[RMDB]
Chemical mapping of a 177-nucleotide RNA with DMS and 2A3. The 2A3 profile rests on 1,869 reads. The data come from the RNA Mapping Database (RMDB), library TTRDEL. 2A3 adducts were read by reverse transcription with SuperScript II with manganese. Conditions: 150 mM KOAc, 10 mM MgCl2 and 150 mM bicine (pH 8.5), 24 C. Reactivities are rounded to 0.1 and cut off at 0 and 3.

RNA sequence: GGGAACGACUCGAGUAGAGUCGAAAAGAUAUGGAUAACUACCCACCGCUGAUGGAGCUUUGAUCUCGGAAACGAGGGAGCUCCUAGGCGAGGUUAUCCUAAGUCAAAAGCGGCGUUCGCGCCGCAACAUUUUACCUUGCUUCGGCAAGGUAAAAUGAAAAGAAACAACAACAACAAC
Reactivity to DMS in 0.01 (KOAc 150mM, MgCl2 10mM, bicine 150mM(pH8.5), 24C), signal-to-noise 2, nucleotides 027 to 126: g010a100u010a190u000g000g010a010u000a000a010c010u020a130c020c010c030a300c180c000g000c010u030g000a220u010g000g000a020g020c000u010u000u000g030a040u060c000u000c000g040g020a080a010a230c000g020a000g020g000g000a000g010c000u010c000c000u000a100g010g010c010g000a070g000g020u000u000a030u000c000c000u000a050a120g010u010c160a130a050a120a170g010c000g000g020c010g020u010u010c150g020c030g020c000c020g010c000a050a050
Reactivity to 2A3 in 0.01 (KOAc 150mM, MgCl2 10mM, bicine 150mM(pH8.5), 24C), signal-to-noise 1, nucleotides 027 to 126: g020a050u260a100u260g020g010a020u010a020a000c010u170a300c040c000c010a000c020c000g050c000u030g010a110u300g000g000a020g020c010u300u220u030g120a120u140c010u000c000g000g050a130a010a020c000g030a000g000g000g050a000g000c000u000c020c010u000a010g000g000c010g000a020g010g000u000u000a000u010c000c010u040a120a000g160u190c080a000a010a100a160g000c000g000g000c040g050u090u130c230g030c020g000c130c000g000c010a010a010